Conditions: 150 mM KOAc, 10 mM MgCl2 and 150 mM bicine (pH 8.5), 24 C. This 177-nucleotide RNA was probed chemically with DMS and 2A3. The 2A3 profile rests on 2,028 reads.

RNA sequence: GGGAACGACUCGAGUAGAGUCGAAAAACUUCCUACUUCGGUAGGAAGUAAAAGUAGAUAAGUUGGUGCUUAGACCACGCCCUCUACCGUAAUAAUAGAUAAACCCUUAGCACUUCGGUGCUAAGAAGAUGCUGCUCUUAUUCGUAAGAGCAGCAUCAAAAGAAACAACAACAACAAC
Reactivity to DMS in 0.01 (KOAc 150mM, MgCl2 10mM, bicine 150mM(pH8.5), 24C), signal-to-noise 2, nucleotides 027 to 126: a020c000u000u000c000c000u020a030c000u000u030c120g030g000u020a000g010g000a010a000g000u000a000a030a120a100g030u000a010g000a060u000a020a030g030u000u000g000g010u000g010c150u020u010a120g020a070c040c020a040c060g010c030c030c130u000c000u000a020c010c050g000u010a050a070u010a070a100u000a080g010a070u000a070a090a110c110c050c000u000u000a010g000c010a020c000u000u010c240g010g040u000g000c000u000a000a000g000a050a080
Reactivity to 2A3 in 0.01 (KOAc 150mM, MgCl2 10mM, bicine 150mM(pH8.5), 24C), signal-to-noise 2, nucleotides 027 to 126: a000c000u010u020c010c000u000a030c020u050u060c150g070g010u020a030g010g030a000a000g000u000a000a000a000a000g010u010a000g010a030u040a130a000g020u150u050g040g010u050g060c150u270u140a050g080a100c020c000a020c020g000c030c000c000u010c000u020a010c010c000g070u040a050a140u090a210a010u050a130g130a070u150a090a120a090c020c030c000u000u000a000g000c000a020c000u040u030c250g050g000u000g000c000u000a000a000g010a000a000
For DMS the reverse transcriptase was MarathonRT. The DMS profile rests on 1,253 reads.